[RMDB]
This 177-nucleotide RNA was probed chemically with DMS.
For DMS, 1,063 sequencing reads were counted.

RNA sequence: GGGAACGACUCGAGUAGAGUCGAAAAAUAAAUUGAUACUGAUGACAGGCCUUCAGGGUUUAAAUAGUUUUGGUGGGUCUACCUGCCAAUUUUGAAGGGAGUAGUUUGAUAGGACCUGGCUGGUAGACAAUCGAACGCAAUUCGUUGCGUUCGAUUGAAAAGAAACAACAACAACAAC
Reactivity to DMS in 0.01 (KOAc 150mM, MgCl2 10mM, bicine 150mM(pH8.5), 24C), signal-to-noise 1, nucleotides 027 to 126: a080u010a100a050a060u000u010g010a060u000a080c010u020g040a090u030g020a100c100a070g010g030c020c010u000u000c050a040g020g010g010u000u000u000a020a070a060u010a120g010u000u000u000u000g040g020u000g000g010g020u000c070u000a080c010c030u000g020c010c000a010a030u000u020u000u000g030a130a080g010g000g010a110g030u010a030g000u010u000u010g020a140u000a110g000g020a190c030c020u000g020g010c020u000g000g000u000a020g010a100